[RMDB]
RNA sequence: GGGAACGACUCGAGUAGAGUCGAAAAGCUCGGAGACGAGCAAGGCUGACAAAACUGUGUCCCAACCUCCACGUGGUGUCGGCUGGAUAAUGCUGCAUUAUGUUGCAUUUAUCAACUGGGAAGAAAACGUCCGCCCUAUCUUCGGAUAGGGCGGACGAAAAGAAACAACAACAACAAC
Reactivity to 2A3 in 0.01 (KOAc 150mM, MgCl2 10mM, bicine 150mM(pH8.5), 24C), signal-to-noise 1, nucleotides 027 to 126: g000c000u000c000g080g030a160g000a070c000g000a000g020c000a000a090g060g020c000u000g000a000c060a000a140a150a090c040u000g000u010g110u020c000c000c000a000a000c000c000u050c000c000a170c100g020u070g060g030u020g070u000c000g040g000c040u020g000g000a000u000a030a000u020g000c000u000g000c000a000u060u100a140u300g010u080u000g000c000a000u010u020u010a080u020c000a000a080c060u050g000g020g100a090a030g020a000a030a070a040